An RNA of 177 nucleotides, treated with 2A3 and DMS and read out base by base. Conditions: 150 mM KOAc, 10 mM MgCl2 and 150 mM bicine (pH 8.5), 24 C. For DMS the reverse transcriptase was MarathonRT. For 2A3 the reverse transcriptase was SuperScript II with manganese.

RNA sequence: GGGAACGACUCGAGUAGAGUCGAAAACACGAAAGUUGGCUAAUCCUGGUCGGACAUCAGGUGGUUAGUGCAGUGGCAUAAGCCAGCUUGGCGCUAAUAGAUACUAAUCGUAGCAUAGCUGAAUAAACAUGAGUGCUCGAUUCGUCGAGCACUCAUGAAAAGAAACAACAACAACAAC
Reactivity to 2A3 in 0.01 (KOAc 150mM, MgCl2 10mM, bicine 150mM(pH8.5), 24C), signal-to-noise 1, nucleotides 027 to 126: c050a010c010g030a080a000a030g030u010u000g060g000c020u020a020a000u040c000c000u000g000g000u030c100g070g180a040c000a100u030c080a070g100g000u040g000g200u100u000a110g110u060g040c000a000g090u060g120g000c010a190u060a230a050g000c000c000a000g020c000u010u010g030g060c010g020c000u020a030a000u070a180g070a010u030a130c070u160a130a080u070c000g130u000a000g000c000a040u020a050g130c030u000g020a160a030u210a010a060a000
Reactivity to DMS in 0.01 (KOAc 150mM, MgCl2 10mM, bicine 150mM(pH8.5), 24C), signal-to-noise 2, nucleotides 027 to 126: c060a120c200g000a150a150a000g000u000u060g010g000c010u010a040a130u030c000c000u000g000g040u000c240g020g020a300c150a000u000c000a000g000g000u000g000g010u000u000a060g000u030g000c040a040g020u040g040g000c020a050u000a140a220g000c050c000a010g000c010u020u000g040g020c130g000c000u000a040a070u010a040g000a020u000a120c100u010a150a160u020c030g030u000a100g180c000a110u010a060g050c030u010g000a120a060u000a020a090a300